[RMDB]
RNA sequence: GGGAACGACUCGAGUAGAGUCGAAAACGACAGCCAUCACAGACCAAGGUAUCGUGCCACGGCAUGUUCCACCUUGGCCAUUUGGUCACGGUCCAGAUAGUCGACCGGAUCGCCGUGCACAAAUAAAGUCUUCUCUCUGCUUCGGCGGAGAGAAGGCAAAAGAAACAACAACAACAAC
Reactivity to 2A3 in 0.01 (KOAc 150mM, MgCl2 10mM, bicine 150mM(pH8.5), 24C), signal-to-noise 9, nucleotides 027 to 126: c050g080a040c030a030g070c040c010a090u130c060a070c030a090g050a050c000c010a020a020g040g000u050a050u160c050g000u010g030c050c020a020c020g010g000c020a040u090g050u060u020c040c010a020c000c000u010u010g000g000c010c000a070u080u050u130g010g000u030c030a020c110g010g000u000c010c000a030g040a110u100a040g090u080c040g010a030c010c000g010g010a020u020c020g000c000c000g000u010g000c010a010c010a010a040a010u120a010a030a010
Reactivity to DMS in 0.01 (KOAc 150mM, MgCl2 10mM, bicine 150mM(pH8.5), 24C), signal-to-noise 6, nucleotides 027 to 126: c080g010a080c080a070g000c020c010a020u030c050a080c140a110g000a080c030c020a060a030g000g010u010a070u050c080g000u000g010c110c040a040c120g020g000c000a060u020g020u030u020c060c070a060c060c050u000u000g010g010c010c020a080u000u010u020g000g020u000c020a060c080g000g000u010c020c040a130g000a090u020a090g000u020c080g000a090c070c050g000g010a070u010c090g000c010c000g010u000g000c030a000c050a070a050a060u040a070a070a080